[RMDB]
RNA sequence: GGGAACGACUCGAGUAGAGUCGAAAAAAGUACUACCCAUGCAUCUGAAGGACUGAUUAACCUCUUCUCUAAGAUGCUUUUCUAUACACCCUUCUUGAGCCAGGAAGAGCUAAAUUGGUAGCCACCAGACGGUGUGUAAUUUCGAUUACACACCGUCAAAAGAAACAACAACAACAAC
Reactivity to 2A3 in 0.01 (KOAc 150mM, MgCl2 10mM, bicine 150mM(pH8.5), 24C), signal-to-noise 1, nucleotides 027 to 126: a010a010g150u110a050c030u060a080c010c000c010a010u100g000c010a010u020c000u070g020a050a050g040g020a000c080u030g010a050u120u040a050a030c000c020u010c000u000u040c050u040c040u060a010a030g000a020u010g000c040u050u010u000u010c010u030a080u030a000c020a070c000c020c000u020u050c020u100u100g050a050g110c040c020a020g030g020a050a050g030a070g100c050u070a020a060a180u100u030g050g010u020a020g050c020c010a010c000c000a040
Reactivity to DMS in 0.01 (KOAc 150mM, MgCl2 10mM, bicine 150mM(pH8.5), 24C), signal-to-noise 2, nucleotides 027 to 126: a050a020g030u010a140c080u010a060c000c000c100a140u010g000c000a010u000c000u000g010a240a200g010g010a070c100u010g000a060u000u000a120a130c300c220u000c000u000u020c000u000c030u000a210a030g000a020u000g020c020u030u000u000u000c120u010a100u000a120c160a060c070c010c020u010u000c030u000u000g000a100g000c060c000a060g000g030a060a020g010a050g020c060u000a030a040a060u000u000g050g000u010a050g030c040c050a110c100c100a110